[RMDB]
The record gives the reactivity of an RNA of 177 nucleotides to DMS and 2A3. The DMS profile rests on 7,037 reads. It was measured as part of the RMDB library OK2TRN. Values cover nucleotides 27 to 126. 2A3 adducts were read by reverse transcription with SuperScript II with manganese. For DMS the reverse transcriptase was MarathonRT.

RNA sequence: GGGAACGACUCGAGUAGAGUCGAAAAGGCGUCUUCGCUGCCUCGGCCGCCGUGCACUGACCGGUAGCCGCCGUAAUCGCGGCAUUGUUCCCAUAAAGGGAUGUGGGUGUGGGUGACGAAGUAGCAGAGGUCCUAAUUAGUUCGCUAAUUAGGACCUAAAAGAAACAACAACAACAAC
Reactivity to DMS in 0.01 (KOAc 150mM, MgCl2 10mM, bicine 150mM(pH8.5), 24C), signal-to-noise 5, nucleotides 027 to 126: g010g010c070g020u000c030u000u000c080g010c020u000g000c020c020u000c040g010g000c070c020g040c010c020g010u010g000c010a080c100u000g000a140c070c060g000g010u000a090g000c010c010g010c000c060g010u000a080a090u010c300g000c020g010g000c020a080u000u010g000u010u010c000c000c000a140u020a040a100a180g000g010g000a050u000g020u010g000g000g020u000g020u010g010g000g020u010g020a060c030g000a030a040g020u000a090g020c030a180g010
Reactivity to 2A3 in 0.01 (KOAc 150mM, MgCl2 10mM, bicine 150mM(pH8.5), 24C), signal-to-noise 5, nucleotides 027 to 126: g080g030c060g060u040c040u080u030c060g010c030u020g010c000c000u010c000g020g000c070c010g020c000c010g070u060g000c020a050c140u150g130a130c050c020g050g030u030a040g010c000c020g000c010c010g050u080a080a090u160c110g000c000g020g000c000a010u020u170g050u130u070c020c000c000a010u220a070a080a010g040g000g010a040u060g060u120g120g000g010u050g010u050g050g000g010u020g010a010c010g010a030a010g000u060a020g000c030a010g030